[RMDB]
RNA sequence: GGGAACGACUCGAGUAGAGUCGAAAACUCUGCCGAUGACUCUUCUCCUGAUCAGCCUACCCUCAAUACAUUUUAUGAGGAAGCAUUGCGUGAGAUACAACAAGGUAAUUACGCAUCGGCUAGCGAGGUUAACCUAACCGUUCGCGGUUAGGUUAACAAAAGAAACAACAACAACAAC
Reactivity to DMS in 0.01 (KOAc 150mM, MgCl2 10mM, bicine 150mM(pH8.5), 24C), signal-to-noise 2, nucleotides 027 to 126: c020u000c030u000g000c010c020g000a030u000g000a110c070u000c030u000u000c030u000c030c050u000g000a090u000c060a160g010c000c040u020a200c130c020c000u000c030a040a090u000a100c300a150u010u000u000u000a040u010g000a020g010g010a070a140g000c070a070u010u020g020c020g000u000g000a050g000a110u010a070c040a100a110c180a100a080g020g010u000a010a090u000u020a030c100g000c000a020u000c070g000g000c000u000a040g000c160g020a040g020
Reactivity to 2A3 in 0.01 (KOAc 150mM, MgCl2 10mM, bicine 150mM(pH8.5), 24C), signal-to-noise 3, nucleotides 027 to 126: c000u020c020u020g000c010c010g080a060u030g090a150c010u030c000u090u040c040u050c000c010u090g050a130u100c050a040g000c000c010u110a140c060c010c010u000c020a090a050u100a170c040a220u010u110u160u270a120u130g010a000g000g000a020a010g000c020a060u080u080g000c020g030u020g020a090g000a050u110a110c050a170a000c020a170a060g120g020u040a050a010u090u040a030c070g000c000a010u030c020g010g000c000u000a020g040c030g050a080g140
Chemical mapping of a 177-nucleotide RNA with DMS and 2A3. For 2A3, 2,282 sequencing reads were counted. The data come from the RNA Mapping Database (RMDB), library OK2TST.